[RMDB]
RNA sequence: GGGAACGACUCGAGUAGAGUCGAAAAAGAUAUGGAUGCUAGGGAGAACGGAGUACGUGCGUUGAAACUCGCUCGGAAACGAGCGAGUGGAGCAUGAAACGUUCGAGGAUCUAGCAUCCUAAGUCAAGCUUAAGUAGUGGUUCGCCACUACUUAAGCAAAAGAAACAACAACAACAAC
Reactivity to DMS in 0.01 (KOAc 150mM, MgCl2 10mM, bicine 150mM(pH8.5), 24C), signal-to-noise 3, nucleotides 027 to 126: a080g000a000u000a300u010g000g020a010u000g010c000u000a020g020g000g000a030g010a020a000c000g020g000a120g000u000a050c300g010u000g010c000g020u000u000g030a170a200a020c000u000c000g020c000u010c000g010g010a100a110a150c010g000a000g000c000g000a010g010u000g000g000a040g000c000a010u000g010a090a120a190c000g000u000u000c000g000a030g020g000a010u000c000u000a000g000c000a000u000c000c000u000a010a100g000u000c030a110a170
Reactivity to 2A3 in 0.01 (KOAc 150mM, MgCl2 10mM, bicine 150mM(pH8.5), 24C), signal-to-noise 1, nucleotides 027 to 126: a000g060a030u120a030u140g000g000a000u010g000c010u010a000g030g000g020a050g000a010a000c000g000g010a000g000u040a050c260g000u010g000c040g230u300u060g000a000a000a000c000u000c000g000c000u000c010g030g020a050a080a070c020g000a020g000c000g000a010g010u000g000g020a010g000c010a020u120g030a020a000a000c010g000u000u010c000g020a030g020g010a000u010c000u000a000g010c000a000u000c000c000u010a050a000g030u000c080a100a030